[RMDB]
RNA sequence: GGGAACGACUCGAGUAGAGUCGAAAAGAAAGAAAGAAACUUUCCAGUUCUGCGUUCAUGUCCCCUGCAGCUUGACUUUAGGGGAAAUCGAGCAACAAGGGACAUGAAUGCAGAACUGGAAAGAUAAUGGGAUAAGUAAUUUCGAUUACUUAUCCCAAAAAGAAACAACAACAACAAC
Reactivity to 2A3 in 0.01 (KOAc 150mM, MgCl2 10mM, bicine 150mM(pH8.5), 24C), signal-to-noise 1, nucleotides 027 to 126: g200a020a050a000g140a020a110a020g060a030a130a020c010u020u000u000c000c000a000g020u000u010c010u010g020c000g000u000u000c000a000u000g000u000c000c000c000c000u000g000c020a060g000c000u000u020g000a000c020u060u080u260a180g000g000g000g150a010a040a000u020c020g010a020g010c000a000a010c010a020a030g010g000g000a000c020a000u000g000a000a000u000g010c000a000g000a010a000c000u000g000g000a000a000a000g000a000u000a000a040
Reactivity to DMS in 0.01 (KOAc 150mM, MgCl2 10mM, bicine 150mM(pH8.5), 24C), signal-to-noise 5, nucleotides 027 to 126: g010a130a100a100g010a100a070a060g010a160a070a090c000u000u000u000c000c000a020g000u000u000c000u000g000c000g010u010u020c000a000u010g000u010c000c000c000c050u010g000c300a110g000c000u000u000g000a030c090u000u000u030a200g010g010g010g020a050a210a040u000c010g010a000g000c010a070a110c020a050a030g000g010g000a000c010a000u000g000a000a000u000g000c000a000g000a010a010c000u000g000g010a000a000a000g000a030u020a030a080